[RMDB]
RNA sequence: GGGAACGACUCGAGUAGAGUCGAAAAGACGUGAUCAACGAACUGCGUGCCGCUGGAGCCGAGGCGAUCCAGAUCAACGAUGCACACCGGUCGGUGCGGGUCGGGGUUGACACCUGGGUUGUCGGUGUCUAAUUCAAUACUUCGGUAUUGAAUUAGAAAAAGAAACAACAACAACAAC
Reactivity to DMS in 0.01 (KOAc 150mM, MgCl2 10mM, bicine 150mM(pH8.5), 24C), signal-to-noise 9, nucleotides 027 to 126: g010a100c080g020u000g010a090u010c070a090a100c080g010a090a090c060u000g010c070g020u000g010c030c030g010c050u000g010g000a120g010c030c030g010a120g000g010c060g010a040u000c020c040a050g010a100u000c050a050a110c050g010a120u010g010c060a070c070a050c020c020g000g010u010c090g020g020u000g010c060g000g000g010u000c030g010g010g010g010u000u000g000a060c080a060c070c020u010g010g010g010u000u000g010u000c020g000g010u000g000
Reactivity to 2A3 in 0.01 (KOAc 150mM, MgCl2 10mM, bicine 150mM(pH8.5), 24C), signal-to-noise 7, nucleotides 027 to 126: g070a000c050g030u050g030a140u090c050a060a060c050g080a050a050c040u080g060c030g050u050g020c010c010g000c050u040g040g030a020g010c030c010g040a060g040g000c020g000a010u000c020c020a020g010a070u030c010a020a030c030g040a030u130g050c050a030c020a040c050c010g050g110u180c090g020g060u070g030c030g010g020g020u030c020g020g020g050g000u010u040g020a020c010a030c020c010u040g000g060g010u020u020g020u020c030g010g040u060g030